Description:
An RNA of 177 nucleotides, treated with DMS and 2A3 and read out base by base. The reactions ran in a buffer of 150 mM KOAc, 10 mM MgCl2 and 150 mM bicine (pH 8.5), at 24 C. Values cover nucleotides 27 to 126. The 2A3 profile rests on 1,196 reads. DMS adducts were read by reverse transcription with MarathonRT. 2A3 adducts were read by reverse transcription with SuperScript II with manganese. For DMS, 3,089 sequencing reads were counted.
RNA sequence: GGGAACGACUCGAGUAGAGUCGAAAAACGAUGUCGUUCGCGACAUCGUAAAUUGUAUAACCUUGGUUGAAGUCUACUUGGUUGUAAAGCGAGACAAGUCAGUGAGAGUCCUAUUCGUAGGACUCAAGAGGAAGUACCAUUUCGAUGGUACUUCCUCAAAAGAAACAACAACAACAAC
Reactivity to DMS in 0.01 (KOAc 150mM, MgCl2 10mM, bicine 150mM(pH8.5), 24C), signal-to-noise 3, nucleotides 027 to 126: a020c010g000a010u000g020u010c000g010u000u020c210g000c010g000a010c010a000u000c050g020u000a000a030a070u000u000g010u020a080u010a080a120c020c000u000u000g010g010u000u010g000a110a070g020u000c030u010a050c030u010u010g000g000u000u000g010u000a040a050a060g010c100g010a090g010a030c080a070a050g000u000c060a050g000u000g000a210g000a010g010u000c000c000u000a030u000u010c190g030u000a000g000g000a010c000u000c000a010a060
Reactivity to 2A3 in 0.01 (KOAc 150mM, MgCl2 10mM, bicine 150mM(pH8.5), 24C), signal-to-noise 1, nucleotides 027 to 126: a000c000g000a000u000g000u040c020g010u060u060c180g000c000g060a000c010a000u000c020g000u000a000a000a000u110u100g060u020a090u030a110a020c020c000u050u040g090g030u050u100g060a130a040g040u030c000u000a020c030u100u060g130g040u110u020g080u140a020a060a060g150c080g020a020g030a030c030a080a070g070u060c060a030g040u010g200a080g010a000g040u000c000c010u010a030u040u090c240g070u030a000g000g000a000c010u020c000a000a000